[RMDB]
RNA sequence: GGGAACGACUCGAGUAGAGUCGAAAAUCAACCUUGCAAAAGUUUGCACUUAUGCCAUCUUUGCUUACUCACCACAGCUUACACUUGUGUUUCCGGAAGUGAAGAUGAUACUUUUAUUAUACACAUGGAUUUCAGAUUAGUUCGCUAAUCUGAAAUCAAAAGAAACAACAACAACAAC
Reactivity to 2A3 in 0.01 (KOAc 150mM, MgCl2 10mM, bicine 150mM(pH8.5), 24C), signal-to-noise 4, nucleotides 027 to 126: u080c010a020a070c010c010u030u170g050c040a020a010a020a120g030u070u130u140g020c040a050c090u180u090a080u250g020c010c010a000u000c010u010u010u010g000c010u020u030a150c010u020c040a030c010c000a000c000a020g000c010u140u180a030c060a030c070u070u070g000u000g000u020u080u050c050c030g000g020a010a000g000u000g010a010a000g010a010u020g000a010u030a010c000u090u080u020u010a130u160u090a090u080a040c050a000c010a060u100g100
Reactivity to DMS in 0.01 (KOAc 150mM, MgCl2 10mM, bicine 150mM(pH8.5), 24C), signal-to-noise 3, nucleotides 027 to 126: u010c130a150a150c090c030u020u010g030c130a050a020a070a040g010u000u010u010g000c060a130c290u010u000a080u010g020c020c010a020u000c000u010u000u000g000c010u000u000a050c010u000c050a080c300c010a050c020a020g020c060u000u030a090c290a150c150u020u010g010u000g000u000u010u000c050c090g010g000a010a030g020u000g000a030a020g010a030u000g010a090u010a010c020u000u020u000u000a070u000u000a120u030a110c130a040c160a120u000g030